Chemical mapping of a 177-nucleotide RNA with 2A3. Values are in units of 0.01, from 0 to 300, in steps of 10. The reactions ran in a buffer of 150 mM KOAc, 10 mM MgCl2 and 150 mM bicine (pH 8.5), at 24 C. For 2A3 the reverse transcriptase was SuperScript II with manganese. Reactivities are given for positions 27 through 126.

RNA sequence: GGGAACGACUCGAGUAGAGUCGAAAAAAACCCUCUUGGUAGCUCCACUGUAAAGGCUUCCAAGAUAUGAGUGAAUGCUAUAGAAAUCGCAGGGGCGUCCAAAAGGCUGCACGUUUCCUGUGGCUCACCGAUGCACGAUUUUCGAAUCGUGCAUCGGAAAAGAAACAACAACAACAAC
Reactivity to 2A3 in 0.01 (KOAc 150mM, MgCl2 10mM, bicine 150mM(pH8.5), 24C), signal-to-noise 1, nucleotides 027 to 126: a010a010a010c000c000c000u010c000u000u000g000g000u000a000g000c030u030c250c020a240c230u300g180u300a000a070a100g010g000c000u000u000c000c000a000a000g000a030u090a050u000g000a000g000u080g000a110a000u110g060c000u100a130u040a280g000a160a130a010u230c000g050c000a000g000g000g010g010c060g000u000c010c010a000a000a000a090g230g070c200u090g010c040a030c000g010u090u060u130c000c000u000g000u000g000g060c000u000c000a000